[RMDB]
This 207-nucleotide RNA was probed chemically with DMS and 2A3. For DMS, 3,931 sequencing reads were counted. It was measured as part of the RMDB library RNAMAK. The reactions ran in a buffer of 150 mM KOAc, 10 mM MgCl2 and 150 mM bicine (pH 8.5), at 24 C.
RNA sequence: GGGAACGACUCGAGUAGAGUCGAAAAGAUAUGGAUCUACUCAGUAUAUGUUUGUCAGAGCUAUGAACACUAUACUCGGAAACGAGUAUAGACGAAGUAGCUCUUGGAUUUAACAUAGAACCGUAGAUCCUAAGUCAAAGAACAGUUCGCUGUUCAAGUAUAAAAGACGGUUCGCCGUCUUUUAUACAAAAGAAACAACAACAACAAC
Reactivity to DMS in 0.01 (KOAc 150mM, MgCl2 10mM, bicine 150mM(pH8.5), 24C), signal-to-noise 2, nucleotides 027 to 156: g030a090u000a240u000g010g010a010u000c000u000a000c010u010c000a200g000u000a150u000a010u000g000u010u000u010g010u010c020a030g000a020g000c000u000a000u010g000a040a210c080a170c010u000a000u000a010c010u000c000g000g000a170a120a300c010g030a020g050u010a020u010a000g010a130c050g000a290a300g020u000a000g020c000u000c000u010u000g010g000a010u000u010u000a010a010c010a040u000a020g010a210a100c250c300g000u000a020g010a020u000c000c000u000a010a050g030u000c010a050a090a060g000a040a040c010a030g000u000u010c160g040c010u000g000u020u000c010a030a190
Reactivity to 2A3 in 0.01 (KOAc 150mM, MgCl2 10mM, bicine 150mM(pH8.5), 24C), signal-to-noise 5, nucleotides 027 to 156: g030a000u070a020u150g000g000a000u010c000u000a000c000u010c000a000g000u010a000u000a000u020g000u010u020u020g010u010c010a000g000a000g010c000u010a030u100g060a190a020c030a010c050u000a000u000a000c000u000c000g000g040a070a080a040c010g000a000g010u010a000u000a000g080a080c050g030a060a010g010u000a000g000c010u010c000u000u030g000g000a000u090u160u300a000a000c000a000u000a010g000a010a000c010c010g000u000a000g000a000u010c000c000u000a010a010g000u010c010a050a030a080g010a010a000c010a010g030u110u130c170g070c160u000g010u010u000c020a020a030